[RMDB]
RNA sequence: GGGAACGACUCGAGUAGAGUCGAAAAUGCGAUAAACGGCACCUAUAAGGUGGUGCCGAACCAGCGUGACCUACCAACAGGCAACGAGCAGUCUGGUAUGACUGCAAACCUAUGGUAAACAAAAGAAGUUGUGCAGUCUAUUCGUAGACUGCACAACAAAAGAAACAACAACAACAAC
Reactivity to DMS in 0.01 (KOAc 150mM, MgCl2 10mM, bicine 150mM(pH8.5), 24C), signal-to-noise 2, nucleotides 027 to 126: u010g040c010g000a110u020a060a080a180c000g050g000c010a000c000c000u020a140u020a220a210g030g000u030g000g020u020g000c000c000g030a020a070c100c060a160g010c000g010u000g000a200c020c010u000a010c020c040a020a120c110a000g010g020c100a080a120c160g020a200g010c000a010g010u000c000u000g010g000u020a120u000g000a010c000u000g000c000a030a110a140c000c000u000a140u000g000g000u000a060a100a060c140a050a100a110a060g000a100a090
Reactivity to 2A3 in 0.01 (KOAc 150mM, MgCl2 10mM, bicine 150mM(pH8.5), 24C), signal-to-noise 1, nucleotides 027 to 126: u040g000c020g040a040u070a060a100a000c000g010g020c010a010c010c020u150a170u040a260a140g300g000u090g030g000u000g040c020c050g010a000a000c010c000a030g050c020g010u010g020a000c010c000u000a030c000c000a040a180c090a090g010g080c050a080a000c120g060a040g000c010a000g000u000c020u110g070g120u210a110u290g000a010c020u000g000c000a000a030a000c000c000u040a040u020g010g000u030a090a120a020c030a010a070a070a050g090a110a010
Notes:
This 177-nucleotide RNA was probed chemically with DMS and 2A3. For DMS, 822 sequencing reads were counted. For 2A3 the reverse transcriptase was SuperScript II with manganese. Values cover nucleotides 27 to 126. DMS adducts were read by reverse transcription with MarathonRT. The RNA was probed in 150 mM KOAc, 10 mM MgCl2 and 150 mM bicine (pH 8.5) at 24 C.